[RMDB]
RNA sequence: GGGAACGACUCGAGUAGAGUCGAAAAACCUUUGUGGUUACGACAGUGGGUAGAACGACGGUAUUUCCCAUUGGGAAAUAUUCGUUCUAUAAUCCACUGAGAACGUAACCACUCUGGUAAACCGUAUGCGAGAAGCUUCGGCUUCUCGCAUACGGAAGAUUAUCACAUGUUUCGACAUGUGAUAAUCAAAAGAAACAACAACAACAAC
Reactivity to 2A3 in 0.01 (KOAc 150mM, MgCl2 10mM, bicine 150mM(pH8.5), 24C), signal-to-noise 4, nucleotides 027 to 156: a000c010c000u020u000u010g010u010g020g000u000u010a020c050g130a080c100a000g010u010g000g000g010u020a010g000a000a000c010g060a030c130g110g010u020a010u010u010u000c030c020c080a130u300u300g000g010g000a000a000a010u020a000u030u050c000g000u000u000c000u010a000u020a010a120u040c000c000a000c010u010g000a050g030a080a030c000g000u000a000a000c000c000a000c000u000c000u000g020g000u040a130a070a030c000c000g000u000a000u000g000c000g000a000g010a000a000g000c000u070u130c300g040g000c000u000u000c020u000c000g030c000a000u000a000c000g000g000a000a010
Reactivity to DMS in 0.01 (KOAc 150mM, MgCl2 10mM, bicine 150mM(pH8.5), 24C), signal-to-noise 1, nucleotides 027 to 156: a030c010c010u000u000u000g000u000g000g000u000u000a000c000g000a230c000a010g070u010g010g020g030u000a020g010a050a030c020g010a040c300g110g040u000a020u010u000u000c000c010c000a290u000u010g040g020g000a020a030a020u000a000u000u000c010g000u010u010c010u000a060u010a160a160u000c000c000a020c000u010g000a070g000a150a110c020g000u000a010a010c000c010a000c000u000c040u020g000g010u000a080a080a160c010c020g000u000a000u000g000c000g040a040g010a090a010g020c000u000u010c300g070g010c020u000u000c000u030c000g030c000a000u010a000c010g010g010a020a020